[RMDB]
RNA sequence: GGGAACGACUCGAGUAGAGUCGAAAAUUCGGCAAUAAGGGGGGAAGUUGCAGAAGGGAGAGUGGGUUGUAUGACUGUUACCUUAGGUGAGGACUUCACCUGCGGCCGGCUCCGUUCAACCGCAAUGCCAUUACUGUUGCUUCGGCAACAGUAAUGGAAAAGAAACAACAACAACAAC
Reactivity to DMS in 0.01 (KOAc 150mM, MgCl2 10mM, bicine 150mM(pH8.5), 24C), signal-to-noise 3, nucleotides 027 to 126: u020u000c050g000g000c050a080a090u010a100a110g000g020g000g070g010g010a050a120g010u010u030g010c060a030g000a100a090g030g020g010a090g020a050g010u020g020g000g010u000u000g010u020a080u010g010a100c040u000g000u030u000a140c050c020u010u000a020g000g000u000g000a000g030g000a130c150u040u000c010a020c020c030u000g000c180g000g000c050c040g000g000c020u000c020c020g020u000u010c040a100a110c040c040g000c180a030a030u060g010
Reactivity to 2A3 in 0.01 (KOAc 150mM, MgCl2 10mM, bicine 150mM(pH8.5), 24C), signal-to-noise 4, nucleotides 027 to 126: u040u000c020g040g010c040a000a110u120a220a140g010g020g000g000g030g020a040a020g060u070u080g030c040a030g080a120a020g040g050g000a110g000a010g030u090g020g070g000u020u080g100u070a120u120g090a110c030u020g020u060u100a050c000c000u050u050a010g000g060u040g060a030g070g030a030c010u050u010c020a050c030c010u040g010c010g010g000c010c000g030g000c010u040c020c010g040u050u040c010a040a040c050c000g030c080a030a040u140g060

An RNA of 177 nucleotides, treated with DMS and 2A3 and read out base by base.
2A3 adducts were read by reverse transcription with SuperScript II with manganese.
Source: RMDB library OK1LIB, as collected in RNAgym.
For 2A3, 2,670 sequencing reads were counted.
For DMS, 4,736 sequencing reads were counted.